Notes:
Chemical mapping of a 207-nucleotide RNA with 2A3. Values cover nucleotides 27 to 156. Conditions: 150 mM KOAc, 10 mM MgCl2 and 150 mM bicine (pH 8.5), 24 C. For 2A3 the reverse transcriptase was SuperScript II with manganese. It was measured as part of the RMDB library OK3TST.
RNA sequence: GGGAACGACUCGAGUAGAGUCGAAAAAGCAGGCUCAAGUCACAUCCUGAAUGUAACCUGUAAGGUGUCCUGGCACUGAGAGACAAGGUAUAAUAGCAGAGCACGUACUGACCUCUCUAAAUUUUCCAACCCUAGUACAGUCUAUAAAAAUGGUGAGGUCAUUUGUUCGUUUCGACGAACAAAUGACAAAAGAAACAACAACAACAAC
Reactivity to 2A3 in 0.01 (KOAc 150mM, MgCl2 10mM, bicine 150mM(pH8.5), 24C), signal-to-noise 1, nucleotides 027 to 156: a000g000c010a010g030g010c020u110c050a020a100g080u050c030a020c000a070u050c020c030u010g080a080a010u120g010u060a080a060c000c000u020g050u080a070a090g040g020u020g040u020c040c020u040g000g000c010a010c100u060g020a000g000a000g030a160c090a090a030g000g000u070a040u030a180a050u110a040g060c030a020g000a000g140c020a040c180g060u090a010c010u020g030a020c010c010u000c000u000c000u000a050a180a170u120u100u070u050c040c050a020a020c050c000c000u000a010g000u060a000c000a080g000u010c020u060a050u100a120a060a100a020a020u110g030g020u040g030a070g000